[RMDB]
RNA sequence: GGGAACGACUCGAGUAGAGUCGAAAAACAGAAGGGUGAAAGUUCAAGCAAGCUAGCCGGCAAAAAAGCAAACUUGACCACCAAGGAUAAAAGAGAUGUUAUCCAAGGAUGCAAAAGAUAAUCUCACAAAAGCUUCAUUCGUUCGCGAAUGAAGCAAGGUUACAACGAGGUUCGCCUCGUUGUAACCAAAAGAAACAACAACAACAAC
Reactivity to 2A3 in 0.01 (KOAc 150mM, MgCl2 10mM, bicine 150mM(pH8.5), 24C), signal-to-noise 2, nucleotides 027 to 156: a010c060a010g080a060a100g090g010g010u050g050a090a010a050g030u110u100c060a000a020g030c040a050a000g000c030u010a030g020c010c020g100g000c020a050a080a050a070a030a020g030c030a060a040a040c030u080u080g020a010c010c020a000c010c010a020a010g020g010a000u010a030a010a020a020g060a000g000a010u060g010u080u020a000u000c000c020a020a030g040g000a030u090g010c040a090a120a020a040g020a020u090a070a070u110c010u000c020a030c090a020a120a010a070g000c000u000u000c000a010u000u000c000g010u030u090c150g020c000g110a000a000u000g010a000a000g010c000a000a000